This 177-nucleotide RNA was probed chemically with 2A3 and DMS. For DMS, 1,684 sequencing reads were counted. The data come from the RNA Mapping Database (RMDB), library RFMREP.
RNA sequence: GGGAACGACUCGAGUAGAGUCGAAAAUCCCUCGUGAAUAUUGCAGGCAUCGACUGCAAAGACUAAACACUCCUCAAGACCGAUAGCGAACAAGUAGCGUGAGCGAACGCUGAAAAGCACCCCACGAGCGAUAAUAAUUGUUCGCAAUUAUUAUCGCAAAAGAAACAACAACAACAAC
Reactivity to 2A3 in 0.01 (KOAc 150mM, MgCl2 10mM, bicine 150mM(pH8.5), 24C), signal-to-noise 1, nucleotides 027 to 126: u000c000c000c000u000c080g050u040g100a110a040u130a070u130u050g000c000a000g050g010c030a170u090c150g120a050c030u000g000c010a010a020a040g040a010c040u100a010a130a020c030a040c020u030c020c010u060c070a100a030g010a050c010c030g080a060u080a020g060c030g030a030a040c020a090a040g050u020a010g050c010g030u010g040a020g050c040g020a040a010c010g000c010u010g030a020a000a000a040g040c000a040c010c010c000c000a010c030g060a060
Reactivity to DMS in 0.01 (KOAc 150mM, MgCl2 10mM, bicine 150mM(pH8.5), 24C), signal-to-noise 3, nucleotides 027 to 126: u000c000c000c010u000c130g010u020g000a110a100u020a090u000u010g000c040a030g020g020c050a090u010c180g020a090c000u000g000c020a060a010a130g000a080c270u010a050a100a090c080a160c070u010c040c030u000c020a060a070g010a060c060c050g010a090u000a060g010c020g000a020a050c080a060a110g020u000a070g010c020g010u000g000a130g010c030g000a050a060c070g010c010u010g010a040a040a080a030g000c050a230c060c010c010c020a050c140g000a050